[RMDB]
RNA sequence: GGGAACGACUCGAGUAGAGUCGAAAAACACACACAAAUAUCAUGUGUGACUCAGAGUUUUUACGUACACAAUGAUACCCCCAUAUCUAGAACCAGUGGAAAUUUUAUAACCAGGUAGGCUAACAUCUAAGCUGAAAUGGUUCGCCAUUUCAGCUUAAAAAGAAACAACAACAACAAC
Reactivity to DMS in 0.01 (KOAc 150mM, MgCl2 10mM, bicine 150mM(pH8.5), 24C), signal-to-noise 1, nucleotides 027 to 126: a060c020a110c070a060c030a020c120a000a070a130u000a080u000c070a060u000g000u000g020u000g030a150c080u000c100a190g020a120g000u050u000u000u000u000a140c180g000u000a020c070a030c050a100a020u000g000a010u000a100c050c000c000c000c010a140u000a060u000c070u000a060g020a110a030c080c070a030g000u010g010g000a040a020a080u000u010u000u000a050u000a140a130c030c010a040g050g020u000a110g010g010c080u000a100a100c130a050u000c090